[RMDB]
RNA sequence: GGGAACGACUCGAGUAGAGUCGAAAAUCUUUACUCACCUUAAUUCUGUAAGAGGGACCUUAUUUAAAAUAAAAGUACUACCACAAACAAAGCCUAUGGUGUGUUCUAUUCUUAGUUAGGUGUCCGAGCAUAGUUAUAGGUUCGCCUAUAACUAUGCAAAAGAAACAACAACAACAAC
Reactivity to DMS in 0.01 (KOAc 150mM, MgCl2 10mM, bicine 150mM(pH8.5), 24C), signal-to-noise 2, nucleotides 027 to 126: u000c020u000u000u000a040c040u000c030a130c110c040u020u000a080a110u010u000c060u000g020u000a050a070g010a120g010g000g000a040c050c020u000u000a010u000u010u000a040a010a070a050u010a050a080a080a080g010u010a030c020u000a030c020c000a020c090a070a070a090c100a060a080a160g010c180c100u000a030u000g010g010u000g000u000g020u000u000c040u010a080u000u000c060u000u000a060g010u000u000a030g000g010u000g030u000c020c030g010a150
Reactivity to 2A3 in 0.01 (KOAc 150mM, MgCl2 10mM, bicine 150mM(pH8.5), 24C), signal-to-noise 3, nucleotides 027 to 126: u000c000u060u150u100a080c030u050c040a110c020c010u130u070a160a080u270u150c040u090g100u100a050a030g010a170g120g010g010a000c000c020u030u050a120u040u190u090a110a120a080a050u100a030a110a050a020g010u000a000c010u030a010c010c020a020c020a120a260a010c020a190a230a020g060c010c020u090a060u080g040g000u020g020u010g020u020u020c020u050a130u020u010c010u050u050a040g010u050u000a000g000g010u070g070u040c010c010g030a020
This 177-nucleotide RNA was probed chemically with DMS and 2A3. For 2A3, 2,004 sequencing reads were counted. 2A3 adducts were read by reverse transcription with SuperScript II with manganese. The reactions ran in a buffer of 150 mM KOAc, 10 mM MgCl2 and 150 mM bicine (pH 8.5), at 24 C.